[RMDB]
Annotation:
Source: RMDB library OK2TST, as collected in RNAgym. Chemical mapping of a 177-nucleotide RNA with 2A3 and DMS. For DMS, 10,463 sequencing reads were counted. For 2A3 the reverse transcriptase was SuperScript II with manganese. The 2A3 profile rests on 4,930 reads.
RNA sequence: GGGAACGACUCGAGUAGAGUCGAAAAAGUCCACCAGAGAGGAAGUGUCCAGGUUCAGGUUAUAUCCUUAAGAUUCCAGCUGGUGAUCCAGAACAGAGUUAACUGACUGGCGUGGUCUUGGGAGAUAGAUUCUUGAACUAUUCGUAGUUCAAGAAUCAAAAGAAACAACAACAACAAC
Reactivity to 2A3 in 0.01 (KOAc 150mM, MgCl2 10mM, bicine 150mM(pH8.5), 24C), signal-to-noise 4, nucleotides 027 to 126: a030g030u020c020c010a010c010c020a060g080a000g030a020g130g020a070a050g090u060g030u060c040c010a020g050g020u050u090c020a000g000g050u080u100a150u040a060u230c010c000u040u100a060a020g010a050u100u020c040c010a020g020c040u020g020g040u040g060a050u010c030c010a020g050a120a060c040a020g090a040g150u140u100a100a150c020u040g050a020c000u010g000g010c030g050u070g030g010u010c020u030u040g040g050g010a080g010a010u130a070
Reactivity to DMS in 0.01 (KOAc 150mM, MgCl2 10mM, bicine 150mM(pH8.5), 24C), signal-to-noise 8, nucleotides 027 to 126: a080g010u010c030c010a090c050c050a090g000a110g010a100g000g010a080a110g010u000g010u010c040c050a070g000g010u000u000c070a050g010g000u010u000a060u010a070u000c020c010u010u000a070a090g010a090u000u000c030c020a080g000c020u000g000g020u000g000a070u010c030c020a080g000a080a100c130a070g000a100g010u000u010a090a090c030u000g000a090c020u010g000g000c300g010u000g000g000u000c020u010u010g000g000g010a080g000a120u000a070